Background
Conditions: 150 mM KOAc, 10 mM MgCl2 and 150 mM bicine (pH 8.5), 24 C. The record gives the reactivity of an RNA of 207 nucleotides to 2A3. Reactivities are rounded to 0.1 and cut off at 0 and 3. 2A3 adducts were read by reverse transcription with SuperScript II with manganese. The data come from the RNA Mapping Database (RMDB), library RNAMAK.
RNA sequence: GGGAACGACUCGAGUAGAGUCGAAAAGGGGUCUAAGGAAUCCCUAUGAUGACCGGUGAACUACGUCUGAAGCCUCCACGGACGCACCGCAAGUAGGGUGGCCCUUAGACGGAGGCACCCAAAGUACUUGUGUCGUGUUCGCACGACACAAGUACAAUGGAUACGUUGCGUUCGCGCAACGUAUCCAAAAAGAAACAACAACAACAAC
Reactivity to 2A3 in 0.01 (KOAc 150mM, MgCl2 10mM, bicine 150mM(pH8.5), 24C), signal-to-noise 2, nucleotides 027 to 156: g020g000g010g000u070c090u130a160a060g220g090a160a170u120c000c000c000u010a010u010g170a130u000g000a000c010c010g000g000u030g000a100a100c060u240a060c300g010u000c000u010g020a100a000g000c000c000u060c000c000a000c000g000g020a000c010g020c000a000c000c010g000c020a210a290g000u010a000g000g000g000u020g020g010c030c000c000u020u030a030g010a010c060g030g000a010g010g000c010a040c010c010c000a070a060a010g000u020a000c010u000u000g000u010g020u000c000g010u020g010u080u110c240g020c070a010c000g000a000c000a000c000a000a000g000u000a000c000a000a020